The record gives the reactivity of an RNA of 177 nucleotides to DMS and 2A3. The DMS profile rests on 45,735 reads. Reactivities are rounded to 0.1 and cut off at 0 and 3. It was measured as part of the RMDB library OK1LIB. The reactions ran in a buffer of 150 mM KOAc, 10 mM MgCl2 and 150 mM bicine (pH 8.5), at 24 C. DMS adducts were read by reverse transcription with MarathonRT.
RNA sequence: GGGAACGACUCGAGUAGAGUCGAAAAACUAGUAUGUACACGAUGAGACUGCCGUGUCGUCUAGACUGCGGAUCCAAUAAUCUCAGAUCUGCGAGAUAUUGUCUCUAGAGUACGAGACAAGUACUCAGUGAAAUGACUACUUCGGUGGUCGUUUCACAAAAGAAACAACAACAACAAC
Reactivity to DMS in 0.01 (KOAc 150mM, MgCl2 10mM, bicine 150mM(pH8.5), 24C), signal-to-noise 9, nucleotides 027 to 126: a120c010u000a020g000u040a010u010g010u040a010c020a020c010g010a080u010g010a140g020a100c120u030g010c070c010g000u000g000u000c010g010u000c010u010a020g010a210c080u020g010c010g000g000a010u000c020c150a080a090u040a100a100u020c110u010c140a140g000a020u000c010u000g010c030g000a080g000a110u010a080u010u000g010u000c010u000c000u010a080g000a070g010u010a020c050g000a080g020a080c170a050a100g000u010a050c010u010c010a170
Reactivity to 2A3 in 0.01 (KOAc 150mM, MgCl2 10mM, bicine 150mM(pH8.5), 24C), signal-to-noise 9, nucleotides 027 to 126: a000c010u020a000g060u130a050u050g080u090a010c010a000c020g050a050u130g030a030g090a090c080u120g110c080c000g000u000g000u010c000g000u000c010u010a030g040a140c040u060g000c000g010g000a000u000c020c030a050a070u220a130a110u090c080u030c110a020g000a040u000c000u020g010c020g040a020g010a030u190a050u050u070g010u000c000u000c000u010a030g020a020g160u060a020c040g010a010g030a040c040a040a020g020u020a030c000u010c030a010